[RMDB]
RNA sequence: GGGAACGACUCGAGUAGAGUCGAAAACGGACACGCACGCCCAUGGCAGCGGAUCCGGCCCACAAGUGGAGGCUUCGAACUCCCACCUGGCCGUCCUCCGGACGGCGGGUCACCGGUCAGGCGGUUCGCAAGGUAGGGAGUUCGCUCCCUACCUUGCAAAAGAAACAACAACAACAAC
Reactivity to DMS in 0.01 (KOAc 150mM, MgCl2 10mM, bicine 150mM(pH8.5), 24C), signal-to-noise 2, nucleotides 027 to 126: c000g000g000a030c300a090c000g000c000a060c090g000c010c040c170a130u000g020g100c000a220g010c000g010g000a260u000c040c020g000g000c000c000c010a170c260a000a080g000u030g000g000a000g010g020c020u000u070c190g020a120a040c010u000c000c000c020a080c000c000u000g010g000c020c000g000u030c000c000u020c050c170g040g040a010c000g000g040c060g000g000g010u000c110a170c100c020g020g000u000c170a100g000g000c010g000g000u000u000c090
Reactivity to 2A3 in 0.01 (KOAc 150mM, MgCl2 10mM, bicine 150mM(pH8.5), 24C), signal-to-noise 3, nucleotides 027 to 126: c000g000g000a050c060a010c150g000c030a120c160g010c000c050c060a130u220g020g000c000a010g020c020g020g000a030u010c000c000g000g030c000c010c000a060c050a010a120g060u300g130g010a000g010g030c040u150u090c190g010a050a010c000u000c000c010c000a000c000c000u100g200g010c020c000g020u050c000c010u270c070c170g080g000a020c040g000g000c000g000g000g000u010c010a020c010c000g090g050u140c060a080g160g100c050g010g010u080u160c080
Structure probing data (DMS and 2A3) for a 177-nucleotide construct. DMS (dimethyl sulfate) methylates the pairing face of unpaired adenines and cytosines. The reactions ran in a buffer of 150 mM KOAc, 10 mM MgCl2 and 150 mM bicine (pH 8.5), at 24 C.